[RMDB]
RNA sequence: GGGAACGACUCGAGUAGAGUCGAAAAUCAGUAAAACUCCAGAAUGGUGGAUGUCAGCGGGGUGCUGAUACCGGCGGUGAGUGGCUCAUUUAACAGGGCGUGCAUGGUCGCCCAGGCGAGGUCGGCGUGGCUGGCUUCCUCGCUGCGGCUGGCCUCAGAUUCCCGUAAUAUUCGUAUUACGGGAAUCAAAAGAAACAACAACAACAAC
Reactivity to 2A3 in 0.01 (KOAc 150mM, MgCl2 10mM, bicine 150mM(pH8.5), 24C), signal-to-noise 3, nucleotides 027 to 156: u050c010a000g030u100a010a110a040a100c020u000c030c010a050g100a180a100u090g060g050u070g040g080a100u150g040u060c040a010g040c060g020g070g020g050u100g050c020u010g000a020u050a070c060c050g000g010c040g010g020u050g000a030g000u060g010g000c020u050c100a110u100u100u140a080a070c080a070g000g030g010c020g030u040g000c060a110u110g020g060u040c010g020c010c000c010a010g040g000c060g030a010g000g010u010c020g000g010c020g010u010g030g000c020u020g030g010c030u130u060c000c010u010c040g000c020u020g000c020g030g040c040u040g000g000c000c000u010c000a010
Reactivity to DMS in 0.01 (KOAc 150mM, MgCl2 10mM, bicine 150mM(pH8.5), 24C), signal-to-noise 1, nucleotides 027 to 156: u020c020a100g000u000a060a040a080a130c040u000c010c020a140g000a080a090u000g010g030u020g020g020a090u000g010u000c040a020g060c040g000g030g020g020u000g000c020u000g020a130u000a030c040c040g030g000c040g020g020u010g010a080g100u000g010g010c000u000c030a150u000u000u010a140a150c030a070g040g020g050c030g010u000g000c100a100u020g000g000u010c010g000c000c020c030a120g030g010c030g000a030g100g030u000c060g020g010c030g000u000g000g040c000u000g010g000c130u000u000c050c030u000c100g030c030u000g040c100g000g000c020u000g000g060c020c020u020c050a070
Chemical mapping of a 207-nucleotide RNA with 2A3 and DMS. Conditions: 150 mM KOAc, 10 mM MgCl2 and 150 mM bicine (pH 8.5), 24 C. The data come from the RNA Mapping Database (RMDB), library OK3TST. For DMS the reverse transcriptase was MarathonRT. For 2A3 the reverse transcriptase was SuperScript II with manganese.